[RMDB]
RNA sequence: GGGAACGACUCGAGUAGAGUCGAAAAGAUAUGGAUCAUACUACCCACCUUAUCCGCAGCUUUGAUCCGUGUUUGUCGGAAACGACAAACACGGGGAGCUGCCGAUAAGAGGUAUGAUCCUAAGUCAUCACUAUGAGUUCUUCGGAACUCAUAGUGAAAAAGAAACAACAACAACAAC
Reactivity to DMS in 0.01 (KOAc 150mM, MgCl2 10mM, bicine 150mM(pH8.5), 24C), signal-to-noise 1, nucleotides 027 to 126: g000a120u000a260u000g000g000a000u000c000a000u000a000c040u010a120c000c020c040a300c050c000u010u000a000u000c000c300g000c000a020g000c000u000u000u000g010a060u010c020c000g000u000g010u000u010u000g000u000c010g010g030a010a030a300c000g020a050c010a050a000a000c000a020c010g010g060g010g000a000g020c000u000g030c010c110g000a010u000a050a030g000a040g020g000u010a000u000g020a030u000c020c020u010a000a110g010u000c100a190

Overview: Chemical mapping of a 177-nucleotide RNA with DMS. DMS adducts were read by reverse transcription with MarathonRT. Source: RMDB library TTRINS, as collected in RNAgym.